[RMDB]
RNA sequence: GGGAACGACUCGAGUAGAGUCGAAAAGAUAUGGAAGGUUCAGCGAAAGGGAGACGACACACGCUCAUCGGAAACGAUGAGACCCGUGUGGAUCGUCGAAGAACUUUCGCUGAACCUUCCUAAGUCAUCACACAAUGUUCUUCGGAACAUUGUGUGAAAAAGAAACAACAACAACAAC
Reactivity to DMS in 0.01 (KOAc 150mM, MgCl2 10mM, bicine 150mM(pH8.5), 24C), signal-to-noise 1, nucleotides 027 to 126: g000a010u010a300u000g000g000a020a000g030g000u010u000c000a050g000c000g030a000a040a000g050g000g020a040g050a000c010g020a040c000a010c000a010c010g000c020u000c000a010u000c000g000g000a130a160a300c010g010a000u000g000a010g030a090c290c260c150g000u000g010u000g030g020a060u010c000g000u000c030g000a080a090g020a220a290c010u000u010u000c010g030c000u000g000a000a000c000c010u000u000c000c010u000a000a110g000u010c010a260